RNA sequence: GGGAACGACUCGAGUAGAGUCGAAAAACAUUGUUCGGGUCGAAGACCUGUUUGAUGGAUUGCAUGUAGGAAAUUUCUGCUUCUGACCUGGAAUAGUGCAGGAACGGUUUUUUCAACAAGCCCACGCCUGUGUUUAACACUUCGGUGUUAAACACAGAAAAGAAACAACAACAACAAC
Reactivity to 2A3 in 0.01 (KOAc 150mM, MgCl2 10mM, bicine 150mM(pH8.5), 24C), signal-to-noise 1, nucleotides 027 to 126: a000c010a020u020u030g010u020u040c020g000g040g010u020c070g210a190a040g030a070c010c010u000g060u030u050u110g070a080u040g060g030a070u080u140g020c060a060u060g020u040a020g080g070a000a010a110u120u110u000c070u060g030c000u000u010c030u080g180a290c010c000u000g050g040a130a180u170a100g080u090g060c040a040g000g030a020a020c030g060g000u000u000u000u020u030u050c000a050a000c020a030a020g040c000c020c010a010c060g110c000
Reactivity to DMS in 0.01 (KOAc 150mM, MgCl2 10mM, bicine 150mM(pH8.5), 24C), signal-to-noise 2, nucleotides 027 to 126: a110c000a020u000u000g020u000u000c000g000g010g010u000c010g010a170a070g000a110c020c020u000g020u000u000u000g000a080u000g000g010a160u000u000g010c130a060u000g020u000a050g010g000a030a010a030u000u000u000c020u000g000c040u010u000c010u000g000a040c040c000u000g050g020a090a180u010a050g000u000g010c020a030g000g010a020a030c040g030g010u000u000u000u000u000u000c020a050a040c100a040a100g020c000c030c010a100c260g020c140
About this RNA:
Chemical mapping of a 177-nucleotide RNA with 2A3 and DMS. As a SHAPE reagent, 2A3 marks flexible, mostly unpaired nucleotides at the ribose 2'-OH. It was measured as part of the RMDB library OK2TRN.